[RMDB]
RNA sequence: GGGAACGACUCGAGUAGAGUCGAAAAGAUAUGGAGGCUUCGACGAUCGCAUCGGGUCGGAAACGACCUUGCGGGAGAAGCUCCUAAGUCAAAGUUGGGGGACUGACUUCGGUCAGUCCCCCAACAAGUUAAACAAUACGUUCGCGUAUUGUUUAACAAAAGAAACAACAACAACAAC
Reactivity to DMS in 0.01 (KOAc 150mM, MgCl2 10mM, bicine 150mM(pH8.5), 24C), signal-to-noise 2, nucleotides 027 to 126: g010a050u000a300u000g010g000a030g010g010c000u010u000c000g010a100c240g000a030u020c010g010c000a040u010c270g000g000g000u000c000g000g000a060a120a200c020g010a010c010c000u000u000g010c000g000g000g000a040g000a020a010g000c010u000c000c000u000a030a130g000u010c020a080a120a180g020u000u000g000g000g000g010g000a050c000u020g000a010c010u000u010c170g020g010u010c000a000g000u000c000c000c000c000c000a010a010c000a020a070

Description
An RNA of 177 nucleotides, treated with DMS and read out base by base. Values cover nucleotides 27 to 126. Reactivities are rounded to 0.1 and cut off at 0 and 3.